[RMDB]
RNA sequence: GGGAACGACUCGAGUAGAGUCGAAAAUAGUGCUAGCAGACUAGCUAGAUGCCAUGGCGCUGCUCUAGCAUGACACGAUCACAUGCUCGUACCACGUACCUAGGUACCGUACGGAUCCGUACUAGGACUGAUGACUCGGUUUCGACCGAGUCAUCAGAAAAGAAACAACAACAACAAC
Reactivity to 2A3 in 0.01 (KOAc 150mM, MgCl2 10mM, bicine 150mM(pH8.5), 24C), signal-to-noise 1, nucleotides 027 to 126: u100a010g020u010g000c000u000a000g000c010a000g060a190c070u150a010g060c010u030a040g060a130u100g140c000c060a120u100g050g000c080g040c030u060g000c020u000c030u030a000g060c020a030u090g000a000c050a000c100g050a070u060c030a020c040a120u140g060c000u000c060g010u030a040c000c020a040c100g030u060a030c030c030u060a040g160g000u030a080c020c030g010u010a000c020g050g100a150u110c030c030g010u010a060c010u090a080g080g000a010
Reactivity to DMS in 0.01 (KOAc 150mM, MgCl2 10mM, bicine 150mM(pH8.5), 24C), signal-to-noise 2, nucleotides 027 to 126: u000a120g020u000g030c010u000a010g010c060a100g020a110c170u000a170g050c000u000a050g010a060u000g000c130c150a080u020g020g000c060g000c070u010g000c060u000c070u000a090g040c020a020u040g000a200c230a050c140g020a030u030c070a100c070a080u000g000c070u000c060g050u000a060c020c100a080c220g000u000a010c020c010u010a050g000g010u000a030c000c110g000u000a040c000g000g000a090u020c050c070g000u010a040c050u000a120g010g030a190